[RMDB]
RNA sequence: GGGAACGACUCGAGUAGAGUCGAAAAGGGCCAACUUCUCUCAUGGCGCAAAUUCAACUUACGGGCUUACCAGCAUGGAGAGAGAUGAAACAUACUAUGACUGUGAACUUACCGUUAGUUACAAGAAGGCAAUACAAUUCUUCGGAAUUGUAUUGCCAAAAGAAACAACAACAACAAC
Reactivity to DMS in 0.01 (KOAc 150mM, MgCl2 10mM, bicine 150mM(pH8.5), 24C), signal-to-noise 1, nucleotides 027 to 126: g000g000g010c030c000a010a110c110u000u000c000u010c000u000c010a300u000g000g000c000g000c100a030a040a190u060u000c160a000a020c000u000u000a000c060g000g000g000c140u010u000a020c140c040a060g000c000a100u000g000g000a060g000a070g000a020g000a090u000g000a110a030a230c060a250u090a000c050u000a020u020g000a200c020u000g140u050g010a120a030c290u000u010a020c020c000g000u020u000a020g000u000u060a200c300a060a100g010a170a080
Reactivity to 2A3 in 0.01 (KOAc 150mM, MgCl2 10mM, bicine 150mM(pH8.5), 24C), signal-to-noise 2, nucleotides 027 to 126: g040g000g000c000c000a010a040c080u060u030c020u000c000u000c040a010u030g020g000c030g000c050a050a080a040u150u110c030a010a000c020u030u030a000c040g000g040g000c060u090u070a240c030c010a030g000c000a000u010g010g040a030g000a000g000a000g000a030u040g030a090a070a020c140a110u140a010c000u030a030u060g220a210c010u000g030u000g060a170a110c020u040u100a080c020c000g000u000u050a010g000u010u000a140c040a020a000g010a080a000